[RMDB]
RNA sequence: GGGAACGACUCGAGUAGAGUCGAAAAUUCUGAAGGCAUGAUCACCCCGUCCGAUGCGGAAGUUCGUGCUUCCGUCGAACGCGAAAGUCGGACGGCGGCCAUGAGUCGCAACGCAAAGCCGCGGCAAUAAGCUCGUCGUCGUUCGCGACGACGAGAACUCCUGGAUCAUCUUCGGAUGAUCCAGGAGAAAAGAAACAACAACAACAAC
Reactivity to 2A3 in 0.01 (KOAc 150mM, MgCl2 10mM, bicine 150mM(pH8.5), 24C), signal-to-noise 1, nucleotides 027 to 156: u090u030c070u050g080a160a090g070g000c000a000u030g050a090u100c000a030c000c010c000c020g000u010c010c030g040a000u010g050c010g000g020a030a000g070u210u300c160g090u300g150c000u000u000c000c000g050u030c030g030a270a080c140g060c040g270a150a040a030g050u020c000g000g030a020c000g000g000c040g000g000c090c000a000u010g000a000g030u050c050g000c050a060a080c160g020c120a120a060a000g060c020c050g000c030g040g000c030a080a020u130a220a000g000c050u000c000g010u010c000g000u000c000g020u000u100c220g010c030g060a010c000g000a000c010g000a000g010a000a000